[RMDB]
RNA sequence: GGGAACGACUCGAGUAGAGUCGAAAAAUAGUUUGUUCGAAGAUGUUAAAGAUUGUUUGAUAAACUUUGGUAUUUGGGACAUGUGCCUUUGGAAUAAGACUGAUAACAAAGUUGAAUUGCCAAACGGUGGAUGGAAUCUUUUCGAAGAUUCCAUCCAAAAAGAAACAACAACAACAAC
Reactivity to DMS in 0.01 (KOAc 150mM, MgCl2 10mM, bicine 150mM(pH8.5), 24C), signal-to-noise 1, nucleotides 027 to 126: a060u000a040g000u010u000u000g000u000u000c020g000a050a130g010a020u000g020u000u000a090a030a040g000a140u020u000g000u000u020u000g020a150u000a040a040a080c010u020u000u000g000g000u000a040u000u040u010g020g000g010a030c040a020u000g060u000g010c030c000u030u030u000g000g000a040a010u000a050a300g000a010c030u000g000a090u000a040a050c300a050a020a010g040u000u000g000a190a110u010u000g000c080c020a010a030a030c150g020g020
Notes
The record gives the reactivity of an RNA of 177 nucleotides to DMS. The DMS profile rests on 669 reads. DMS adducts were read by reverse transcription with MarathonRT. The RNA was probed in 150 mM KOAc, 10 mM MgCl2 and 150 mM bicine (pH 8.5) at 24 C.